[RMDB]
RNA sequence: GGGAACGACUCGAGUAGAGUCGAAAAGAUAUGGAUGCUGGGAAGUCCAUGCUAAGCGAUAAGAGGCAAUCGGAAACGAUUGAGCCUCUUUUGACGCUUAACAUGGACUUCCCAGCAUCCUAAGUCAGGUAUAUGAUAGGUUCGCCUAUCAUAUACCAAAAGAAACAACAACAACAAC
Reactivity to DMS in 0.01 (KOAc 150mM, MgCl2 10mM, bicine 150mM(pH8.5), 24C), signal-to-noise 3, nucleotides 027 to 126: g010a030u010a300u010g000g020a000u000g010c000u000g000g000g010a040a010g010u000c000c000a000u010g000c000u000a000a020g020c000g010a150u010a030a010g010a020g000g020c010a050a010u000c000g010g000a150a120a250c000g000a020u000u000g010a200g000c010c000u010c000u000u010u000u010g010a230c090g000c000u000u000a000a010c000a010u000g000g000a000c010u000u000c000c010c020a000g000c010a000u000c000c000u000a010a060g000u010c060a140